[RMDB]
RNA sequence: GGGAACGACUCGAGUAGAGUCGAAAAGAUAUGGAGCCAAAUUUCUCUUGGAUUUAUGGUGAGGUCAAGUAUAUCGGAAACGAUAUACUUGAUGUAGCCAUUGUCAGAGAAAUUGGCUCCUAAGUCAGUGUACUAGUUAGUUCGCUAACUAGUACACAAAAGAAACAACAACAACAAC
Reactivity to DMS in 0.01 (KOAc 150mM, MgCl2 10mM, bicine 150mM(pH8.5), 24C), signal-to-noise 4, nucleotides 027 to 126: g010a050u010a300u010g000g000a010g040c010c000a000a050a120u000u000u000c000u000c000u000u010g010g020a020u010u000u010a010u000g000g000u000g000a230g010g000u000c010a000a010g010u000a000u000a010u000c000g010g010a160a080a230c000g010a010u000a000u000a000c000u000u000g000a000u000g000u010a300g000c000c000a010u010u000g010u000c000a040g000a010g000a020a010a010u000u000g000g000c000u000c000c000u000a000a070g000u000c050a170
Reactivity to 2A3 in 0.01 (KOAc 150mM, MgCl2 10mM, bicine 150mM(pH8.5), 24C), signal-to-noise 2, nucleotides 027 to 126: g030a030u110a050u220g010g010a000g010c010c040a080a230a230u000u030u000c030u020c040u070u290g290g010a070u300u300u200a020u100g030g030u060g030a180g000g190u010c000a000a000g000u000a000u010a000u020c010g020g000a060a060a040c000g000a000u000a000u000a010c000u000u000g000a000u030g010u010a000g000c000c020a000u000u010g000u000c000a000g000a000g000a010a000a000u000u000g000g000c000u000c000c000u000a010a000g010u010c040a020